This 177-nucleotide RNA was probed chemically with DMS and 2A3. The data come from the RNA Mapping Database (RMDB), library OK2TST. The reactions ran in a buffer of 150 mM KOAc, 10 mM MgCl2 and 150 mM bicine (pH 8.5), at 24 C. Reactivities are given for positions 27 through 126.
[RMDB]
RNA sequence: GGGAACGACUCGAGUAGAGUCGAAAAGGUUGCAUAGACGAAAUUGAGGUCGGCAAUUGCGGAAGGCAGAUCGUCGUAAACGACGGCAUUAUCGAUCACAUGAUCGGCCUUACUGGCCGCUGCCCUAAGUGGUAAUGGACUUCGGUCCAUUACCACUAAAAGAAACAACAACAACAAC
Reactivity to DMS in 0.01 (KOAc 150mM, MgCl2 10mM, bicine 150mM(pH8.5), 24C), signal-to-noise 2, nucleotides 027 to 126: g000g000u000u010g000c040a120u020a140g000a080c030g000a070a070a050u000u030g010a080g070g000u000c000g000g020c000a040a000u000u000g010c050g040g000a090a100g000g010c080a070g000a080u010c010g000u000c010g010u010a050a190a230c070g010a010c010g000g010c180a100u000u000a110u000c010g000a020u000c040a140c190a040u000g000a070u020c010g010g000c020c000u000u000a140c200u020g010g000c020c080g040c070u010g020c030c010c040u000a150
Reactivity to 2A3 in 0.01 (KOAc 150mM, MgCl2 10mM, bicine 150mM(pH8.5), 24C), signal-to-noise 2, nucleotides 027 to 126: g060g000u040u040g030c030a100u080a160g020a010c020g070a070a180a110u140u130g050a040g070g030u010c050g000g070c030a030a040u080u140g030c000g100g000a030a010g060g070c020a010g020a260u030c010g020u000c020g000u030a100a110a140c040g050a000c020g000g040c000a000u120u000a050u150c010g010a000u030c000a040c040a300u250g010a030u020c010g010g040c000c000u050u170a110c030u010g160g000c000c040g030c040u050g020c030c020c010u060a100
Description:
For DMS the reverse transcriptase was MarathonRT.